[RMDB]
RNA sequence: GGGAACGACUCGAGUAGAGUCGAAAAUAGAAGACACACUCCCACUCCCAGACUGGUGGGCUUAGGCUUUCGGUUCACCAUCCUUCGCCUGAGCUCAUGAAUCAUGGUGCUGGGAAUUAGAUGUAGGAUCCCUCGUCUUACUUCUGACAGAGGCGCAAAGUCCAUACGUAUUCGUACGUAUGGACUUAAAAGAAACAACAACAACAAC
Reactivity to 2A3 in 0.01 (KOAc 150mM, MgCl2 10mM, bicine 150mM(pH8.5), 24C), signal-to-noise 3, nucleotides 027 to 156: u120a010g070a100a010g120a020c010a000c000a030c120u040c000c000c000a040c040u000c000c000c000a010g010a090c040u190g070g000u000g000g010g000c000u000u000a000g000g010c010u090u070u120c120g000g030u100u170c040a060c140c000a080u070c000c000u110u140c060g000c000c000u000g010a010g000c000u000c000a000u030g050a000a040u140c070a060u130g010g020u110g140c090u000g000g000g000a000a000u010u030a000g050a060u040g080u030a040g040g080a080u060c020c010c000u030c020g020u000c010u010u110a170c040u060u100c010u020g010a040c020a140g000a000g020g030c050g020c100a040
Reactivity to DMS in 0.01 (KOAc 150mM, MgCl2 10mM, bicine 150mM(pH8.5), 24C), signal-to-noise 2, nucleotides 027 to 156: u010a080g010a060a080g030a150c090a090c040a100c080u000c020c020c020a120c050u000c040c000c050a160g000a040c030u010g040g040u000g010g010g010c000u000u000a040g020g020c010u000u000u000c060g020g000u000u010c080a290c130c070a070u000c020c020u020u000c130g000c010c010u000g020a060g010c020u000c030a040u000g020a140a120u000c050a150u010g010g000u000g050c040u020g000g020g000a040a060u000u010a080g000a080u000g020u000a040g010g010a050u000c040c090c080u000c090g000u000c000u000u000a020c040u000u000c010u000g000a070c090a090g000a080g000g010c050g020c110a120
This 207-nucleotide RNA was probed chemically with 2A3 and DMS. 2A3 adducts were read by reverse transcription with SuperScript II with manganese. Conditions: 150 mM KOAc, 10 mM MgCl2 and 150 mM bicine (pH 8.5), 24 C. DMS adducts were read by reverse transcription with MarathonRT. For DMS, 5,032 sequencing reads were counted.